Structure probing data (2A3 and DMS) for a 177-nucleotide construct.
For DMS the reverse transcriptase was MarathonRT.
RNA sequence: GGGAACGACUCGAGUAGAGUCGAAAAGAUAUGGACAGCUCCAGUGCCAGCUCUGGUUCGGAAACGAACCUGAGCGGUAAUACUGGGAGCUGUCCUAAGUCAAAACUGACUUGUUCGCAAGUCAGAACAACAUACAGGGGUUCGCCCCUGUAUGUUGAAAAGAAACAACAACAACAAC
Reactivity to 2A3 in 0.01 (KOAc 150mM, MgCl2 10mM, bicine 150mM(pH8.5), 24C), signal-to-noise 2, nucleotides 027 to 126: g000a020u060a030u150g000g010a000c000a000g010c010u000c000c010a020g020u000g130c050c080a120g000c010u000c010u040g000g000u000u010c000g030g000a100a100a050c010g000a010a000c010c000u000g000a010g000c000g010g000u080a140a080u150a040c010u060g170g060g010a010g010c000u000g000u000c000c000u000a010a000g000u010c020a020a010a110a190c010u000g000a000c000u010u010g030u120u160c300g000c160a020a000g000u020c000a030g010a050a040
Reactivity to DMS in 0.01 (KOAc 150mM, MgCl2 10mM, bicine 150mM(pH8.5), 24C), signal-to-noise 3, nucleotides 027 to 126: g010a020u010a300u020g010g000a020c000a010g020c010u010c000c000a040g020u000g030c030c060a120g040c000u000c000u010g010g030u000u000c020g040g020a120a090a230c000g020a010a020c000c000u010g000a000g030c010g000g030u010a070a090u020a180c020u000g030g010g010a030g030c000u000g000u000c000c000u000a000a080g010u010c030a100a090a110a190c000u000g000a030c010u000u010g000u000u010c240g010c020a010a000g000u000c000a000g000a090a180